[RMDB]
RNA sequence: GGGAACGACUCGAGUAGAGUCGAAAAUAAAGGAGGUAGGGGUGCAGAGACAGCCAGGAGGUUUGCCUAGAAGCAGCCACCCUUGAAAGAGUGCGUAAUAGCUCACUGAUCGAGCGCUCUUGCGCCGUGAGUUGCUAUGAUUCGUCAUAGCAACUCAAAAAGAAACAACAACAACAAC
Reactivity to 2A3 in 0.01 (KOAc 150mM, MgCl2 10mM, bicine 150mM(pH8.5), 24C), signal-to-noise 1, nucleotides 027 to 126: u130a010a060a020g010g000a030g000g050u050a040g000g010g010g000u020g000c020a030g020a020g020a140c010a010g000c060c010a030g000g000a030g040g030u080u180u110g040c000c000u090a170g040a230a020g060c000a000g000c000c010a040c010c000c010u010u050g060a020a050a000g050a020g010u080g020c040g030u080a100a050u050a170g000c000u010c000a040c030u080g020a300u130c080g000a010g000c010g060c000u040c050u030u020g030c000g000c020c010g010
Reactivity to DMS in 0.01 (KOAc 150mM, MgCl2 10mM, bicine 150mM(pH8.5), 24C), signal-to-noise 3, nucleotides 027 to 126: u010a070a130a140g020g000a070g000g000u010a040g020g020g000g020u020g020c020a050g000a300g000a060c050a040g010c070c080a090g000g010a130g020g010u000u020u010g030c000c030u010a160g010a140a150g000c010a010g000c010c020a090c070c000c050u000u000g020a090a070a080g000a050g000u000g010c080g020u010a050a090u020a130g010c010u000c020a100c090u000g010a140u000c090g000a160g000c040g030c000u000c050u000u000g000c030g010c000c020g010
Conditions: 150 mM KOAc, 10 mM MgCl2 and 150 mM bicine (pH 8.5), 24 C. The record gives the reactivity of an RNA of 177 nucleotides to 2A3 and DMS. Reactivities are given for positions 27 through 126. DMS adducts were read by reverse transcription with MarathonRT. For 2A3, 1,423 sequencing reads were counted.